An RNA of 177 nucleotides, treated with 2A3 and DMS and read out base by base. For DMS the reverse transcriptase was MarathonRT.
RNA sequence: GGGAACGACUCGAGUAGAGUCGAAAACCGAUGGCUUCGCGAAUAGAAGGAUGCCAGUUAACGGCGCGAUUGACCGCGUCAUUGAGCGUCAGGUUGCCCGGCGCGGCGGCGCUGAGCGGCAACUCAGGAUGUGGUAACAGUUCGCUGUUACCACAUCAAAAGAAACAACAACAACAAC
Reactivity to 2A3 in 0.01 (KOAc 150mM, MgCl2 10mM, bicine 150mM(pH8.5), 24C), signal-to-noise 2, nucleotides 027 to 126: c010c000g040a120u060g000g000c000u000u010c040g040c030g250a200a130u120a270g110a140a050g080g010a020u050g000c000c000a000g020u000u140a090a060c100g000g000c030g000c020g050a090u080u170g090a070c090c060g030c080g020u000c010a010u020u190g050a080g020c030g050u060c060a020g060g010u040u020g000c020c000c000g010g020c000g000c000g110g140c180g120g000c000g000c000u020g020a030g050c070g010g000c010a010a010c030u010c060a050g120
Reactivity to DMS in 0.01 (KOAc 150mM, MgCl2 10mM, bicine 150mM(pH8.5), 24C), signal-to-noise 2, nucleotides 027 to 126: c010c000g010a170u000g010g000c010u000u010c000g010c060g020a130a120u030a140g000a160a110g000g000a020u000g020c000c040a050g030u000u020a090a130c200g020g010c020g000c020g020a150u000u010g010a060c140c070g020c060g020u000c010a090u010u010g000a160g010c010g010u010c050a090g010g010u010u000g000c010c000c000g020g000c020g010c000g070g020c210g000g000c000g020c000u000g000a080g040c090g000g010c010a020a030c020u000c140a080g020